An RNA of 207 nucleotides, treated with 2A3 and DMS and read out base by base. Reactivities are given for positions 27 through 156. Conditions: 150 mM KOAc, 10 mM MgCl2 and 150 mM bicine (pH 8.5), 24 C. For DMS the reverse transcriptase was MarathonRT.
RNA sequence: GGGAACGACUCGAGUAGAGUCGAAAAGCUUCCGUCGAACGCGAAAGUCGGAUGGCGGCCAUGAGUCGCAACGCAAAGCCGCGGCAAGUGGAGUUAGCGAGAAGAGACUAGGCUUUGGUUUCUUCAAAUUAGUGAGUGUGGUUCGCCACACUCACAAUCAAAUGGAUUUGUUCGCAAAUCCAUUUGAAAAAGAAACAACAACAACAAC
Reactivity to 2A3 in 0.01 (KOAc 150mM, MgCl2 10mM, bicine 150mM(pH8.5), 24C), signal-to-noise 5, nucleotides 027 to 156: g000c000u060u020c010c000g010u010c020g090a230a050c030g010c020g120a220a090a060g090u250c030g030g020a070u060g040g000c010g000g000c010c000a070u070g010a010g010u020c010g010c030a070a070c060g040c140a110a140a060g060c060c040g010c030g000g010c040a030a040g000u020g020g030a070g020u100u120a040g050c090g040a050g040a150a030g070a010g030a010c040u060a030g040g060c000u070u050u050g030g010u020u000u010c010u030u040c030a080a100a130u120u060a060g000u000g010a000g000u000g010u000g010g040u050u060c200g030c060c000a000c000a000c000u000c000a000c000a000a000
Reactivity to DMS in 0.01 (KOAc 150mM, MgCl2 10mM, bicine 150mM(pH8.5), 24C), signal-to-noise 4, nucleotides 027 to 156: g010c020u000u000c010c020g030u000c010g020a110a120c180g010c010g000a090a070a130g000u010c030g010g010a230u000g030g000c020g020g000c000c010a080u010g000a300g030u000c010g010c010a030a040c030g000c050a130a170a250g020c010c020g030c010g010g010c020a050a300g020u000g010g000a130g010u000u000a070g020c020g020a170g010a060a080g010a080g000a030c020u000a100g020g010c100u000u000u010g000g000u000u000u000c000u010u000c040a050a060a150u000u000a100g010u000g010a020g010u000g000u000g010g000u000u000c220g010c010c000a000c000a000c000u000c000a000c000a000a090